Chemical mapping of a 207-nucleotide RNA with 2A3. The data come from the RNA Mapping Database (RMDB), library OK3TST.
RNA sequence: GGGAACGACUCGAGUAGAGUCGAAAACGCAAAAAUUGGUGUCUUUGUACAAAGACAGUGCCACAACACAACUCAGUGACCAUCGGGAGAGCAGCCUCAUGAUGGGCGAUGCUCCAUCAGUUUUCUCUUGCGAUCUUUUGCAUAGAUCGGUCCCGCACUGGUACCGGUAUUUCGAUACCGGUACCAGAAAAGAAACAACAACAACAAC
Reactivity to 2A3 in 0.01 (KOAc 150mM, MgCl2 10mM, bicine 150mM(pH8.5), 24C), signal-to-noise 2, nucleotides 027 to 156: c070g000c040a030a010a040a020a030u100u140g020g020u030g030u030c080u050u090u160g140u170a040c110a060a030a000g030a000c020a010g080u070g070c030c010a050c060a170a030c030a050c020a130a090c040u100c100a040g050u030g070a060c000c000a070u060c080g000g040g020a070g010a000g040c010a000g040c000c020u080c030a090u140g050a070u100g020g010g000c010g090a080u190g000c030u000c010c000a000u000c000a000g000u000u000u090u000c140u010c000u010u140g060c000g030a050u000c030u070u080u070u140g070c010a050u060a090g000a080u010c020g010g030u020c000c000c000g020c010a020

The reactions ran in a buffer of 150 mM KOAc, 10 mM MgCl2 and 150 mM bicine (pH 8.5), at 24 C.